Conditions: 150 mM KOAc, 10 mM MgCl2 and 150 mM bicine (pH 8.5), 24 C. The record gives the reactivity of an RNA of 177 nucleotides to 2A3 and DMS. In probing experiments dimethyl sulfate is read out at A N1 and C N3, which are open when not base-paired.
[RMDB]
RNA sequence: GGGAACGACUCGAGUAGAGUCGAAAACGCUCCAGGGGAAUCAGGGCAUCGCCUCCUUUUCUGGGAGGACACUCCCUUCUGAUGGUGAAUGGGAACUCCCUUCCUCCUGCAGCAGCCUGCCUGCAGCGACUAUAUAGCGGUUCGCCGCUAUAUAGUCAAAAGAAACAACAACAACAAC
Reactivity to 2A3 in 0.01 (KOAc 150mM, MgCl2 10mM, bicine 150mM(pH8.5), 24C), signal-to-noise 5, nucleotides 027 to 126: c050g000c020u000c030c000a020g020g020g000g020a040a050u150c060a100g010g000g000c030a090u120c080g030c020c000u040c000c010u120u210u170u160c180u150g020g000g000a000g000g010a000c010a020c010u030c020c020c000u020u010c020u050g220a240u190g090g180u140g050a050a060u140g010g000g010a030a020c030u060c010c000c000u000u010c000c010u040c000c000u010g010c000a010g000c000a010g000c010c010u050g030c000c010u060g020c040a050g050c020
Reactivity to DMS in 0.01 (KOAc 150mM, MgCl2 10mM, bicine 150mM(pH8.5), 24C), signal-to-noise 4, nucleotides 027 to 126: c120g030c030u000c140c010a010g010g000g000g010a060a060u000c210a060g000g010g020c300a100u010c240g000c000c000u000c020c000u000u000u020u020c270u010g000g000g000a000g020g000a060c170a070c140u000c020c000c000u000u010c030u000g010a160u010g010g000u000g010a030a020u000g030g010g010a050a120c170u000c020c010c010u000u010c030c000u000c050c000u000g010c170a020g010c030a100g020c040c030u000g010c090c010u000g010c100a100g010c180